The record gives the reactivity of an RNA of 177 nucleotides to DMS and 2A3.
Conditions: 150 mM KOAc, 10 mM MgCl2 and 150 mM bicine (pH 8.5), 24 C.
For DMS, 952 sequencing reads were counted.
The 2A3 profile rests on 1,710 reads.
For 2A3 the reverse transcriptase was SuperScript II with manganese.
Values are in units of 0.01, from 0 to 300, in steps of 10.
The data come from the RNA Mapping Database (RMDB), library M2PK90.

[RMDB]
RNA sequence: GGGAACGACUCGAGUAGAGUCGAAAAGUAAAUAAAGCGCACCAAUAUGGAGGUGCGCAACCAGCGUGUCCUAGGAACACGCAUCCACGCGUCUCCUAAGACGCGAAAGGUAUUCCAAAUAAAAAAAGCCAAAUAAUGGAUUCGUCCAUUAUUUGGCAAAAGAAACAACAACAACAAC
Reactivity to DMS in 0.01 (KOAc 150mM, MgCl2 10mM, bicine 150mM(pH8.5), 24C), signal-to-noise 1, nucleotides 027 to 126: g000u010a010a070a200u030a110a240a130g020c010g000c000a000c010c020a120a170u010a260u000g000g000a140g030g010u000g010c000g000c020a010a010c100c070a060g000c050g000u000g010u010c020c060u000a110g030g020a020a020c050a000c000g000c020a070u000c070c200a100c050g000c000g020u010c020u000c180c070u000a090a070g000a030c000g020c000g000a010a030a030g010g020u010a030u000u000c010c010a060a090a090u020a050a010a040a080a140a040a300
Reactivity to 2A3 in 0.01 (KOAc 150mM, MgCl2 10mM, bicine 150mM(pH8.5), 24C), signal-to-noise 2, nucleotides 027 to 126: g020u070a020a130a110u150a090a210a020g000c000g000c000a000c020c000a030a060u210a280u300g150g020a090g020g000u000g010c000g010c000a000a000c010c000a040g050c000g000u020g000u000c030c060u070a050g010g110a070a000c000a010c010g000c000a010u060c020c020a050c030g020c000g010u010c010u040c010c070u090a070a000g000a000c000g000c000g000a070a010a000g010g000u010a070u040u010c010c000a100a050a060u260a100a150a020a010a000a010a000